Chemical mapping of a 177-nucleotide RNA with DMS and 2A3. For DMS the reverse transcriptase was MarathonRT. The reactions ran in a buffer of 150 mM KOAc, 10 mM MgCl2 and 150 mM bicine (pH 8.5), at 24 C. The data come from the RNA Mapping Database (RMDB), library OK1LIB.
RNA sequence: GGGAACGACUCGAGUAGAGUCGAAAAAGAAAUUUGCUACAGAGCAGGUGUAAAUCAAAAUGCUAUCAUAAAGGAUAUAUCUGAUGAACAAUUUGAUUCUUUACACAAAGUAUUUUGUAAUUUAUUCAAAUGAGUCGAGUUUCGACUCGACUCAUUUAAAAGAAACAACAACAACAAC
Reactivity to DMS in 0.01 (KOAc 150mM, MgCl2 10mM, bicine 150mM(pH8.5), 24C), signal-to-noise 2, nucleotides 027 to 126: a110g010a070a120a040u010u050u010g010c010u010a130c160a060g000a060g020c030a020g010g000u020g030u030a020a040a010u000c000a010a000a040a010u020g020c100u030a050u010c100a070u000a030a030a080g000g020a170u020a110u020a060u020c040u000g020a040u010g020a090a070c030a020a030u020u000u020g030a010u010u000c090u000u000u000a010c130a070c130a070a070a060g020u010a040u040u000u000u000g020u010a030a090u000u000u000a060u000u030c030
Reactivity to 2A3 in 0.01 (KOAc 150mM, MgCl2 10mM, bicine 150mM(pH8.5), 24C), signal-to-noise 2, nucleotides 027 to 126: a000g230a010a070a020u050u100u150g000c000u070a190c040a200g100a050g040c030a020g180g000u040g000u010a020a070a020u070c010a000a000a000a000u020g000c030u060a010u090c030a010u050a030a090a040g040g030a010u060a030u010a050u220c040u120g070a090u060g030a290a070c030a070a080u030u040u130g000a000u070u000c070u050u000u000a000c020a020c010a030a100a020g020u030a070u050u040u010u000g030u020a120a070u060u020u130a160u120u100c030